An RNA of 177 nucleotides, treated with DMS and read out base by base.
The RNA was probed in 150 mM KOAc, 10 mM MgCl2 and 150 mM bicine (pH 8.5) at 24 C.
RNA sequence: GGGAACGACUCGAGUAGAGUCGAAAAGCAUAGCGUCAAGUUGGUUGACCAGAAGUCUGGUUAGCAAACAGAGUAAAACCAAAAGGUUAGACGCACUCUGUGAAAAAGUACGAAAGUAGAAAGAUAACAUAUCCGAGUCUUUCGAGACUCGGAUAUGAAAAGAAACAACAACAACAAC
Reactivity to DMS in 0.01 (KOAc 150mM, MgCl2 10mM, bicine 150mM(pH8.5), 24C), signal-to-noise 2, nucleotides 027 to 126: g020c050a080u000a090g010c000g040u000c010a140a120g040u000u000g030g010u000u000g000a030c020c030a000g000a300a170g030u030c010u000g000g040u000u010a070g000c010a100a090a030c020a060g000a070g000u010a100a050a020a110c010c000a070a150a130a150g000g000u000u000a070g010a030c080g050c050a080c020u000c000u020g020u010g000a070a110a040a090a040g000u000a020c030g030a100a070a100g010u000a050g000a080a090a110g050a040u000a090a130